[RMDB]
RNA sequence: GGGAACGACUCGAGUAGAGUCGAAAAUCGUGUCGGUCACGAGGAGCGAAGUGUAUAGUCGACGAGGAAACGUCAGGACAGUGAGCGUGGCCAAGGUACAGCAACAAUGCCUCUGCAGCAUCAGGAAUCCGAUCUUGACGUUCGCGUCGAGAUCGGAAAAAGAAACAACAACAACAAC
Reactivity to DMS in 0.01 (KOAc 150mM, MgCl2 10mM, bicine 150mM(pH8.5), 24C), signal-to-noise 5, nucleotides 027 to 126: u010c030g020u000g010u010c080g030g040u000c020a010c050g000a100g010g000a120g030c090g000a120a120g040u030g000u010a120u050a120g000u020c040g000a060c030g010a140g020g020a080a080a100c040g000u010c020a100g010g010a020c070a070g000u010g000a140g020c060g030u000g010g000c050c050a100a060g030g000u000a010c100a080g030c100a070a080c150a070a070u020g000c020c010u000c060u020g000c070a100g000c080a090u020c060a100g000g010a100a150
Reactivity to 2A3 in 0.01 (KOAc 150mM, MgCl2 10mM, bicine 150mM(pH8.5), 24C), signal-to-noise 6, nucleotides 027 to 126: u080c030g000u030g080u080c100g040g020u070c010a000c040g050a030g040g030a020g020c040g030a100a030g070u070g060u230a110u060a140g050u050c020g000a040c010g010a060g050g150a160a060a040c020g030u010c020a020g050g050a020c020a040g050u050g140a020g050c040g040u030g010g040c000c020a020a020g030g010u090a070c010a040g040c020a050a030c040a080a090u120g000c000c010u020c030u070g020c020a050g020c000a060u050c020a020g040g110a060a080